The record gives the reactivity of an RNA of 177 nucleotides to DMS and 2A3. For 2A3, 2,639 sequencing reads were counted. DMS adducts were read by reverse transcription with MarathonRT. High 2A3 reactivity points to a flexible backbone, as in loops and unpaired stretches. DMS (dimethyl sulfate) methylates the pairing face of unpaired adenines and cytosines.
[RMDB]
RNA sequence: GGGAACGACUCGAGUAGAGUCGAAAAGAUAUGGAACCACCGAGUAGGAACUACGAUUAUCGCUCGGAAACGAGCGUAAGAUCGCCGAAACUGGUUCCUAAGUCAAACGACCGCUUCGGCGGUCGAAUCUGGUAUUACACUUCGGUGUAAUACCAGAAAAAGAAACAACAACAACAAC
Reactivity to DMS in 0.01 (KOAc 150mM, MgCl2 10mM, bicine 150mM(pH8.5), 24C), signal-to-noise 2, nucleotides 027 to 126: g000a060u000a300u010g000g000a000a020c000c020a040c300c060g020a090g000u000a140g010g000a080a080c160u050a290c020g020a020u000u010a160u000c000g000c000u000c000g000g010a120a050a190c010g010a030g000c000g020u010a050a150g000a000u000c030g000c010c030g000a080a050a100c100u000g000g010u000u030c000c000u010a040a110g010u010c050a160a120a190c080g010a000c010c000g020c010u010u000c200g000g020c030g000g000u000c010g070a010a040
Reactivity to 2A3 in 0.01 (KOAc 150mM, MgCl2 10mM, bicine 150mM(pH8.5), 24C), signal-to-noise 1, nucleotides 027 to 126: g010a000u050a020u110g010g000a000a000c000c010a050c180c000g040a030g010u040a030g140g000a120a140c190u170a110c300g010a000u030u020a110u170c010g030c020u000c010g010g030a000a080a010c000g000a000g000c010g000u020a030a050g050a030u020c010g020c060c000g010a020a020a030c040u020g000g010u000u010c000c000u010a130a020g050u030c030a050a140a130c020g000a000c010c000g050c020u070u050c250g100g000c000g000g000u000c010g010a000a050